The record gives the reactivity of an RNA of 177 nucleotides to 2A3 and DMS. For 2A3, 1,935 sequencing reads were counted. DMS adducts were read by reverse transcription with MarathonRT. The RNA was probed in 150 mM KOAc, 10 mM MgCl2 and 150 mM bicine (pH 8.5) at 24 C. For DMS, 1,818 sequencing reads were counted. The data come from the RNA Mapping Database (RMDB), library OK2TST.
RNA sequence: GGGAACGACUCGAGUAGAGUCGAAAAGGUGAUUGCCCACUACUUUGGCGCGAAGGAUUGGACGGGCUUGAAGCGAGGCAUCGAGACGUUUUAUAUCGCAAUGCUCAUUGGCUCGGUGAUCAUCACGUCGCUAAAUGGGUUUCGACCCAUUUAGCGAAAAAGAAACAACAACAACAAC
Reactivity to 2A3 in 0.01 (KOAc 150mM, MgCl2 10mM, bicine 150mM(pH8.5), 24C), signal-to-noise 2, nucleotides 027 to 126: g060g020u020g060a090u030u110g060c000c010c010a040c070u170a090c010u040u080u060g050g000c050g000c030g090a080a030g050g090a060u010u050g050g000a020c000g020g010g160c060u010u090g050a060a010g080c030g090a100g180g000c000a050u070c040g000a010g010a010c020g000u000u000u110u040a160u010a040u020c030g000c110a080a030u160g010c020u000c080a040u010u060g000g000c020u010c030g000g030u040g000a040u000c000a000u040c010a000c050g050
Reactivity to DMS in 0.01 (KOAc 150mM, MgCl2 10mM, bicine 150mM(pH8.5), 24C), signal-to-noise 2, nucleotides 027 to 126: g010g030u010g020a060u000u010g000c000c040c070a160c230u000a070c070u000u010u000g010g010c030g000c040g000a050a120g010g000a100u010u020g000g000a070c020g020g000g020c010u010u010g010a070a120g010c040g010a120g020g020c030a040u000c040g010a030g000a100c050g000u020u000u000u020a090u000a050u000c020g000c050a080a060u010g010c010u020c030a090u000u000g000g030c070u000c150g020g020u000g010a050u000c020a040u010c040a090c120g030